[RMDB]
RNA sequence: GGGAACGACUCGAGUAGAGUCGAAAAAUAAAGCGUAAUCGCAUCCCAGUAGCAAAGAGCAGCGUAAAGGCGAAAGCCGAACUCAAGAUCGCAUCGGGGUAAGAUGCGAUCGUAGCCACGCAAAAAAGCUCUAGUAACGUUUCGACGUUACUAGAGCAAAAGAAACAACAACAACAAC
Reactivity to DMS in 0.01 (KOAc 150mM, MgCl2 10mM, bicine 150mM(pH8.5), 24C), signal-to-noise 1, nucleotides 027 to 126: a090u030a040a020a160g020c000g030u000a100a150u000c070g010c000a150u000c000c010c020a200g010u000a070g030c060a100a100a040g010a060g000c010a090g040c040g000u000a020a080a110g000g000c010g000a050a060a130g010c000c020g000a040a030c010u000c090a050a090g000a020u000c000g000c000a000u000c000g000g000g050g000u000a160a030g010a010u000g000c000g030a000u010c020g030u000a070g000c040c110a010c120g020c040a000a080a040a070a140a060
Reactivity to 2A3 in 0.01 (KOAc 150mM, MgCl2 10mM, bicine 150mM(pH8.5), 24C), signal-to-noise 1, nucleotides 027 to 126: a010u100a010a070a010g050c000g130u090a170a040u210c040g030c050a020u020c000c000c040a010g090u100a010g000c030a060a060a060g040a060g000c060a040g010c030g100u140a060a080a000g080g000c030g040a050a000a020g000c000c040g000a060a010c030u020c070a030a080g000a000u010c000g000c010a010u000c000g030g030g060g070u110a080a060g000a000u010g000c020g000a000u000c000g010u000a000g020c000c030a050c030g000c060a000a040a050a090a000a000